[RMDB]
Background:
Conditions: 150 mM KOAc, 10 mM MgCl2 and 150 mM bicine (pH 8.5), 24 C. This 177-nucleotide RNA was probed chemically with 2A3. It was measured as part of the RMDB library OK1LIB.

RNA sequence: GGGAACGACUCGAGUAGAGUCGAAAACUGUAGACCGUCGAUUGGCACUUGCAACUUUCGACAAAUUCAAGGACACGUAUCAUCCAAUCUGUAAAGCUCUUGUGAAACAAGAUUUAGGUCUUUGAAACACGCCUCGCGAUUUCGAUCGCGAGGCGUGAAAAGAAACAACAACAACAAC
Reactivity to 2A3 in 0.01 (KOAc 150mM, MgCl2 10mM, bicine 150mM(pH8.5), 24C), signal-to-noise 1, nucleotides 027 to 126: c040u150g000u070a060g130a200c010c010g010u000c000g000a040u000u020g270g000c030a030c130u140u300g000c010a090a120c020u000u000u170c080g050a120c150a060a040a000u030u040c000a040a080g060g010a000c040a000c220g100u070a060u090c000a000u020c040c000a000a010u040c000u040g070u210a130a000a000g020c000u000c000u040u000g090u050g280a000a090a120c200a260a020g020a190u110u060u130a190g000g010u000c000u000u060u000g000a030a010a000